This 177-nucleotide RNA was probed chemically with 2A3 and DMS. For 2A3 the reverse transcriptase was SuperScript II with manganese. The data come from the RNA Mapping Database (RMDB), library OK1LIB.
RNA sequence: GGGAACGACUCGAGUAGAGUCGAAAAGAGAAGACGAAAUUCGCGUCAGAUACGAAAACGAAAACAAGGACGCAACGGACCUAUUGCUUCUUUCGAUCGACGACGCCGAAGUGAAACAUCACUGGAACACUACCAGGUGUUUCGACACCUGGUAGUGAAAAGAAACAACAACAACAAC
Reactivity to 2A3 in 0.01 (KOAc 150mM, MgCl2 10mM, bicine 150mM(pH8.5), 24C), signal-to-noise 7, nucleotides 027 to 126: g140a000g040a060a030g070a020c090g050a070a040a130u100u050c030g010c000g010u010c050a040g020a030u110a110c040g020a040a040a060a010c080g030a040a050a010a030c070a030a040g050g020a020c030g040c110a120a040c110g070g080a090c010c000u050a090u060u120g020c030u010u030c000u010u030u010c010g030a020u020c010g070a080c060g000a010c010g040c070c020g040a050a020g020u020g070a070a110a030c040a030u090c010a000c060u040g020g050a050a030
Reactivity to DMS in 0.01 (KOAc 150mM, MgCl2 10mM, bicine 150mM(pH8.5), 24C), signal-to-noise 5, nucleotides 027 to 126: g010a120g010a100a060g020a080c050g020a060a110a140u030u010c070g000c020g010u000c020a140g020a100u020a100c090g030a040a000a040a120c220g010a030a040a040a130c140a070a050g000g010a120c060g000c140a080a080c260g000g010a120c020c020u020a080u030u000g000c170u000u020c030u020u000u010c040g000a060u010c020g000a110c150g000a060c010g000c030c030g000a040a030g000u000g000a050a130a080c130a080u020c050a040c020u010g020g000a100a130